[RMDB]
RNA sequence: GGGAACGACUCGAGUAGAGUCGAAAAGGUUCUGUACACGUGGUGUCGAGCAGACAGACCGCUUUCGUUCACCACGGACACGUCCACGCGGUGCGUUCGCCCGGUACGAGCCAGGCGAUGAGUCACCACGCUCACCAGGAAGAUGAUGUCGCGGACGUCCUUUACCAGAAUUCGUUCUGGUAAAGGAAAAAGAAACAACAACAACAAC
Reactivity to DMS in 0.01 (KOAc 150mM, MgCl2 10mM, bicine 150mM(pH8.5), 24C), signal-to-noise 3, nucleotides 027 to 156: g030g020u010u010c010u020g040u000a100c070a040c010g050u000g030g020u020g020u000c060g000a050g040c050a080g010a210c080a250g000a250c040c020g030c010u010u000u000c020g010u000u010c010a030c000c020a040c040g000g020a110c070a060c040g010u000c000c020a150c040g020c030g040g010u010g000c060g000u000u000c030g040c010c000c040g000g030u010a010c260g020a300g010c000c040a070g020g020c020g100a040u020g010a160g020u010c000a070c000c000a070c030g010c040u010c020a090c030c000a170g020g030a090a130g000a100u000g000a100u000g000u010c070g000c010g010g000a130c050g020
Reactivity to 2A3 in 0.01 (KOAc 150mM, MgCl2 10mM, bicine 150mM(pH8.5), 24C), signal-to-noise 3, nucleotides 027 to 156: g110g000u080u070c030u050g090u090a040c140a010c080g010u010g000g000u000g010u000c000g000a000g020c090a050g130a180c060a050g090a110c070c090g010c030u090u170u080c020g040u060u080c010a010c000c000a000c000g010g000a000c020a000c030g000u000c000c000a060c120g010c010g000g000u030g020c010g000u030u040c010g000c000c010c000g010g010u100a150c150g010a040g100c010c000a020g000g020c020g000a030u070g030a070g130u130c000a010c100c000a020c070g000c000u000c000a060c020c010a030g070g050a050a040g050a070u130g010a090u110g050u100c000g020c040g030g000a010c010g010
An RNA of 207 nucleotides, treated with DMS and 2A3 and read out base by base. Source: RMDB library OK3TST, as collected in RNAgym. For DMS, 5,191 sequencing reads were counted. For DMS the reverse transcriptase was MarathonRT. Conditions: 150 mM KOAc, 10 mM MgCl2 and 150 mM bicine (pH 8.5), 24 C.